An RNA of 177 nucleotides, treated with 2A3 and DMS and read out base by base. For 2A3, 1,902 sequencing reads were counted. The DMS profile rests on 3,609 reads. For 2A3 the reverse transcriptase was SuperScript II with manganese.
RNA sequence: GGGAACGACUCGAGUAGAGUCGAAAAAUCAUUCUGCUUGGCGCUCCGGGCGCGGGGAAAGGGACUCAGGCUCAGUUCAUCAUGGAGAAAUAUGGUAUUCCGCAAAUCUCCACUGGCGAUAUGCUGCGAAUAGGAGACCAUUCGUGGUCUCCUAUUCAAAAGAAACAACAACAACAAC
Reactivity to 2A3 in 0.01 (KOAc 150mM, MgCl2 10mM, bicine 150mM(pH8.5), 24C), signal-to-noise 2, nucleotides 027 to 126: a000u070c040a070u120u010c010u040g070c010u030u060g080g060c030g010c050u030c070c000g100g010g000c080g000c010g000g000g030g020a080a080a110g080g020g010a030c000u030c100a020g060g000c000u010c070a030g020u030u050c020a050u010c010a000u110g010g010a020g000a030a120a040u160a050u030g090g010u120a220u200u150c020c000g020c060a100a060a050u000c010u000c000c000a030c070u010g000g000c040g030a060u020a020u270g030c030u010g050c030
Reactivity to DMS in 0.01 (KOAc 150mM, MgCl2 10mM, bicine 150mM(pH8.5), 24C), signal-to-noise 4, nucleotides 027 to 126: a060u000c080a050u000u010c030u010g000c070u010u010g010g010c060g010c030u000c100c080g020g000g010c050g020c040g000g040g000g020a070a110a090g020g000g010a090c070u000c060a080g010g000c040u010c040a080g010u010u010c040a050u000c060a090u000g000g000a040g010a040a070a130u010a070u000g010g010u010a170u010u010c030c010g000c040a060a080a150u000c010u000c010c010a070c210u000g010g020c030g010a080u010a060u000g020c030u000g010c250